The record gives the reactivity of an RNA of 177 nucleotides to 2A3 and DMS. For 2A3, 3,009 sequencing reads were counted. The reactions ran in a buffer of 150 mM KOAc, 10 mM MgCl2 and 150 mM bicine (pH 8.5), at 24 C. For DMS the reverse transcriptase was MarathonRT. Reactivities are given for positions 27 through 126.
RNA sequence: GGGAACGACUCGAGUAGAGUCGAAAAGAUAUGGACCUAACAAGAGGUUCCCUACAUCGGAAACGAUGUAGAACACUACCCACCUUGCUAGGUCCUAAGUCAAAAGCACAUUCUUCGGAAUGUGCAAGGUGGUACAAAGGUUCGCCUUUGUACCACCAAAAGAAACAACAACAACAAC
Reactivity to 2A3 in 0.01 (KOAc 150mM, MgCl2 10mM, bicine 150mM(pH8.5), 24C), signal-to-noise 1, nucleotides 027 to 126: g040a000u030a010u080g000g000a000c000c010u020a030a000c010a010a010g130a110g160g040u080u060c040c000c000u000a000c000a000u010c000g020g010a050a020a000c000g010a000u000g000u010a000g000a020a000c070a040c050u250a130c000c000c060a090c050c000u070u010g030c020u010a000g000g000u000c010c000u020a020a000g000u000c010a080a080a080a120g000c000a000c000a020u020u000c000u050u030c260g120g010a010a000u000g000u000g050c000a000a010
Reactivity to DMS in 0.01 (KOAc 150mM, MgCl2 10mM, bicine 150mM(pH8.5), 24C), signal-to-noise 1, nucleotides 027 to 126: g000a030u000a160u000g000g010a040c000c000u010a000a000c000a020a030g010a060g050g010u000u000c120c120c000u000a010c000a000u000c000g000g000a110a050a080c000g000a050u010g010u030a000g000a040a090c100a140c200u000a090c150c040c030a160c080c000u000u000g000c000u000a000g000g000u000c000c010u000a000a080g000u000c010a050a070a120a130g020c020a020c000a010u000u000c000u010u000c230g050g000a020a000u000g030u000g000c000a000a010